The data come from the RNA Mapping Database (RMDB), library M2PK50. An RNA of 177 nucleotides, treated with DMS and read out base by base. DMS adducts were read by reverse transcription with MarathonRT. Conditions: 150 mM KOAc, 10 mM MgCl2 and 150 mM bicine (pH 8.5), 24 C. High DMS reactivity at an A or C suggests that its Watson-Crick edge is free. The DMS profile rests on 1,032 reads.
RNA sequence: GGGAACGACUCGAGUAGAGUCGAAAACUCUGCAUAUUCGUAUGCAGAGAAAUAACGGUCGGCUCAUGCAGCUAGUCGAAGAUGCUGCUCGACCUUUUGGUAAAAACCGGAGGUUCGCCUCCGGUAAAUCCGCCAGAUAAUUCGUUAUCUGGCGGAUAAAAGAAACAACAACAACAAC
Reactivity to DMS in 0.01 (KOAc 150mM, MgCl2 10mM, bicine 150mM(pH8.5), 24C), signal-to-noise 2, nucleotides 027 to 126: c000u000c000u000g000c000a010u000a010u000u010c240g020u000a010u000g040c000a020g000a030g000a060a090a050u010a060a120c150g000g010u000c010g000g010c200u000c160a110u010g000c010a000g010c020u000a170g000u000c280g000a160a170g000a140u000g010c010u000g010c010u000c010g000a010c010c010u020u000u010u020g000g000u000a070a070a090a070a050c000c000g010g000a000g010g010u000u010c300g000c010c000u000c000c010g000g000u000a000a030